[RMDB]
RNA sequence: GGGAACGACUCGAGUAGAGUCGAAAAAUACAGCGUAAUCGAGCGGAGGAAAACGGCACUCCGAAAAUCCGGUACGAUUAUGAUCCCACUGCGUCGACGCUAGAUCCAGAACCGGAUUGCCGAGGAAGACAUCUCUAUUUUUCGAAAUAGAGAUGUCAAAAGAAACAACAACAACAAC
Reactivity to 2A3 in 0.01 (KOAc 150mM, MgCl2 10mM, bicine 150mM(pH8.5), 24C), signal-to-noise 6, nucleotides 027 to 126: a000u170a020c090a020g020c000g030u030a030a040u050c020g010a020g110c020g020g020a010g010g040a050a140a030a080c000g000g000c030a010c050u010c000c000g010a060a020a000a010u000c010c000g020g050u080a070c040g020a030u070u040a040u160g050a040u020c010c010c010a020c040u070g020c030g090u080c050g030a070c030g000c030u040a040g010a130u040c030c040a030g020a110a040c020c010g000g000a020u010u030g010c000c010g010a030g050g080a090a060
Reactivity to DMS in 0.01 (KOAc 150mM, MgCl2 10mM, bicine 150mM(pH8.5), 24C), signal-to-noise 7, nucleotides 027 to 126: a080u010a100c160a080g000c020g010u000a040a030u000c020g010a150g010c010g000g000a040g010g010a060a070a090a130c040g000g010c070a060c130u010c020c000g000a040a060a080a070u000c010c010g010g000u000a100c070g000a040u000u010a030u000g000a080u000c010c010c010a140c130u010g010c080g020u000c040g000a060c060g020c050u010a050g010a080u010c040c080a100g000a080a080c110c020g000g000a030u000u000g010c030c010g010a170g010g010a110a100